[RMDB]
RNA sequence: GGGAACGACUCGAGUAGAGUCGAAAACGCACCUAAAAGCGUUUUCUCGUCGGCUCGUUAAAUGCUCUUGAAAAUCGUAGAUGUGUGCCAGAGCGAAGCUCAGUUGCAAGUGAUACGGCCAUUUUUUGUGGCAGAUAUCCAUAACGCUGACUACAAAGUAGAAAGUGGAGUUCGCUCCACUUUCUACAAAAGAAACAACAACAACAAC
Reactivity to DMS in 0.01 (KOAc 150mM, MgCl2 10mM, bicine 150mM(pH8.5), 24C), signal-to-noise 1, nucleotides 027 to 156: c010g040c000a160c170c120u000a070a080a110a130g010c020g000u040u000u000u000c080u030c040g020u000c000g000g050c020u020c000g000u000u010a080a050a080u000g000c030u000c030u000u000g010a070a020a080a190u000c070g000u010a070g050a090u020g030u000g040u020g000c040c060a110g000a140g040c030g020a100a070g010c020u000c060a300g050u010u020g080c000a130a190g120u050g000a070u000a020c020g030g020c010c030a020u040u000u000u000u020u060g070u000g020g080c010a020g020a040u000a000u020c020c010a210u000a100a060c040g000c000u000g000a050c060u000a190c120a110a120a260
Reactivity to 2A3 in 0.01 (KOAc 150mM, MgCl2 10mM, bicine 150mM(pH8.5), 24C), signal-to-noise 2, nucleotides 027 to 156: c010g000c020a080c060c180u230a100a110a020a020g000c020g000u020u000u000u030c040u030c030g050u000c010g020g000c010u030c040g000u070u070a050a110a070u120g000c030u000c000u020u070g090a110a050a040a070u120c060g030u120a040g060a280u130g140u020g030u050g070c020c010a030g000a010g020c020g020a060a000g000c020u010c050a010g000u070u080g040c030a090a110g040u080g110a010u010a050c060g070g000c000c010a050u060u050u020u000u150u300g020u010g010g020c010a010g020a050u000a010u020c020c000a020u070a200a010c010g070c130u100g050a010c000u150a100c070a040a040a040
Source: RMDB library RFM130, as collected in RNAgym. This 207-nucleotide RNA was probed chemically with DMS and 2A3. For DMS, 1,579 sequencing reads were counted. Values are in units of 0.01, from 0 to 300, in steps of 10.